Source: RMDB library OK3TST, as collected in RNAgym.
The record gives the reactivity of an RNA of 207 nucleotides to 2A3 and DMS.
Conditions: 150 mM KOAc, 10 mM MgCl2 and 150 mM bicine (pH 8.5), 24 C.
[RMDB]
RNA sequence: GGGAACGACUCGAGUAGAGUCGAAAAAGCUCCAUGAACUGCCAGUCCCACUCCUGUGGUUCAUACCCACAGCUGUAACCUAUCUAGUUUUAUUUUUCUCAGAUCUCACGAGAUACCAAGCCAAUUCUGAGAAGUACUCCAGUGUGUGUAAAAGAUAGCACGUAUAAUAUUUCGAUAUUAUACGUGCAAAAGAAACAACAACAACAAC
Reactivity to 2A3 in 0.01 (KOAc 150mM, MgCl2 10mM, bicine 150mM(pH8.5), 24C), signal-to-noise 5, nucleotides 027 to 156: a000g050c040u020c040c010a120u090g060a060a030c030u030g020c040c010a040g040u020c030c010c010a040c030u060c020c020u000g010u030g020g000u060u100c020a050u130a110c020c000c000a010c000a010g010c020u050g060u090a030a040c010c020u060a090u130c020u040a120g060u020u080u080u080a110u060u140u000u050u000c000u000c010a030g000a090u010c040u050c070a050c090g040a030g010a110u070a110c050c050a070a000g060c020c020a040a100u090u030c010u010g020a010g000a010a000g010u030a030c040u010c060c050a070g030u030g000u000g000u010g010u260a050a060a070a060g220a120u300a040
Reactivity to DMS in 0.01 (KOAc 150mM, MgCl2 10mM, bicine 150mM(pH8.5), 24C), signal-to-noise 2, nucleotides 027 to 156: a080g000c020u010c010c030a070u000g020a140a110c010u020g000c010c010a200g000u020c070c020c040a300c020u010c030c010u020g040u000g010g020u000u000c230a110u000a160c300c010c010a040c030a020g010c030u000g010u010a060a120c030c030u000a060u010c050u000a080g000u010u000u010u010a130u010u070u000u000u020c040u000c010a050g010a060u000c100u010c050a160c010g020a160g040a110u010a150c070c040a080a140g000c040c020a100a140u000u000c000u000g010a060g000a060a070g010u000a060c020u000c040c030a080g010u000g000u000g030u020g020u010a040a080a080a100g000a160u000a140